[RMDB]
RNA sequence: GGGAACGACUCGAGUAGAGUCGAAAAUAGUCCGGCACCGGCUUCCCAGUGAUCCGGGACUCCGGUACGGAUCACUGUGCCGACUCCUGGUACGACCACGUCGGGUCGCAGGUGCGUCGGAACCGACGCGCUAGGUGCCGUUCGCGGCACCUAGCGCAAAAGAAACAACAACAACAAC
Reactivity to 2A3 in 0.01 (KOAc 150mM, MgCl2 10mM, bicine 150mM(pH8.5), 24C), signal-to-noise 1, nucleotides 027 to 126: u050a020g040u010c020c000g000g020c010a000c010c000g080g050c030u040u000c070c020c000a010g020u010g000a010u000c000c010g000g050g150a020c010u000c020c190g090g030u030a000c000g000g000a010u030c010a010c000u050g000u010g050c060c000g040a030c040u010c020c030u050g050g020u120a090c090g020a030c090c050a090c120g130u080c090g070g000g000u060c020g000c000a000g000g030u050g040c040g120u120c000g000g010a050a020c020c020g030a060c130
Reactivity to DMS in 0.01 (KOAc 150mM, MgCl2 10mM, bicine 150mM(pH8.5), 24C), signal-to-noise 1, nucleotides 027 to 126: u010a120g020u000c000c040g010g020c030a030c020c040g020g000c050u010u000c070c080c010a020g010u000g010a010u010c030c020g000g000g000a030c020u000c200c110g010g010u000a040c010g000g010a020u000c040a010c010u000g020u000g000c020c000g000a130c080u010c130c060u010g000g000u000a120c100g010a060c010c050a070c170g020u000c080g040g010g000u000c030g010c020a060g020g000u000g000c060g010u000c010g030g010a070a120c100c030g000a070c080